[RMDB]
RNA sequence: GGGAACGACUCGAGUAGAGUCGAAAAAUCAGGGUAUUAGACUGGAGCAAGCUCUCAGGUCGGCCUAAAGGAGACUUGGGGCUCUGGAGUCCAUGGAUUGAAUUCCACAGGUGAAUUUUCCUAUGGAGGAAGAGAAGUGAUUCGUCACUUCUCUUCCAAAAGAAACAACAACAACAAC
Reactivity to 2A3 in 0.01 (KOAc 150mM, MgCl2 10mM, bicine 150mM(pH8.5), 24C), signal-to-noise 1, nucleotides 027 to 126: a000u100c030a000g110g000g010u080a130u160u060a080g070a140c000u010g000g010a030g000c020a000a110g010c050u020c010u030c150a050g000g020u030c000g080g200c000c000u140a300a090a060g030g000a000g020a000c000u000u040g000g000g000g000c010u020c030u020g010g030a030g080u000c000c000a000u060g010g030a060u090u200g050a040a200u020u000c000c000a030c130a090g210g000u130g060a040a090u010u030u090u110c010c000u000a070u040g050g010a040
Reactivity to DMS in 0.01 (KOAc 150mM, MgCl2 10mM, bicine 150mM(pH8.5), 24C), signal-to-noise 2, nucleotides 027 to 126: a040u020c030a100g000g010g020u000a090u000u010a090g000a130c040u010g000g000a090g010c050a150a050g000c080u000c020u010c010a020g000g010u000c000g010g050c020c020u020a080a110a130g000g000a300g010a020c010u000u000g000g000g000g000c010u010c060u000g000g000a110g000u000c000c020a050u000g010g010a070u000u000g020a100a100u000u000c000c000a130c120a110g000g000u010g030a040a070u020u000u000u000c010c020u000a070u000g010g020a300
Notes
This 177-nucleotide RNA was probed chemically with 2A3 and DMS. 2A3 adducts were read by reverse transcription with SuperScript II with manganese. For DMS, 1,868 sequencing reads were counted. The data come from the RNA Mapping Database (RMDB), library OK2TRN. For 2A3, 866 sequencing reads were counted.